Structure probing data (DMS and 2A3) for a 177-nucleotide construct. 2A3 adducts were read by reverse transcription with SuperScript II with manganese. DMS adducts were read by reverse transcription with MarathonRT. The 2A3 profile rests on 2,179 reads.
[RMDB]
RNA sequence: GGGAACGACUCGAGUAGAGUCGAAAAUGAAUCGUUACUUUAUUUAAUUUUAUGCUAAUCCAGCGCGUUCGAAAAUAGUGUCAACUUGAUUCAAAUGAUGUUUAGGAUCGAAACAUUCAUCCAAUUCCACGUAUAGUGCCUUCGGGCACUAUACGUGAAAAGAAACAACAACAACAAC
Reactivity to DMS in 0.01 (KOAc 150mM, MgCl2 10mM, bicine 150mM(pH8.5), 24C), signal-to-noise 1, nucleotides 027 to 126: u000g020a020a080u000c070g000u030u040a060c040u000u000u000a010u010u000u010a060a130u000u010u010u010a020u020g030c090u000a230a120u030c050c060a030g010c100g000c040g030u000u020c060g000a080a000a000a170u000a000g000u000g040u060c130a020a010c040u000u030g000a300u000u000c000a000a070a090u050g020a010u020g000u040u050u000a040g000g000a130u040c100g030a060a020a050c020a000u000u010c000a010u000c050c050a040a130u000u000c110
Reactivity to 2A3 in 0.01 (KOAc 150mM, MgCl2 10mM, bicine 150mM(pH8.5), 24C), signal-to-noise 5, nucleotides 027 to 126: u090g020a010a060u030c030g100u010u060a040c030u070u140u250a190u180u110u100a190a120u110u100u090u180a110u200g030c020u030a000a080u090c070c010a040g040c010g000c020g040u090u110c060g080a130a030a030a030u040a020g010u040g030u070c040a010a010c060u010u100g000a030u070u010c000a000a010a070u100g070a050u050g130u030u060u140a180g020g020a090u070c090g100a070a080a060c020a040u080u060c020a090u000c000c020a020a050u120u030c050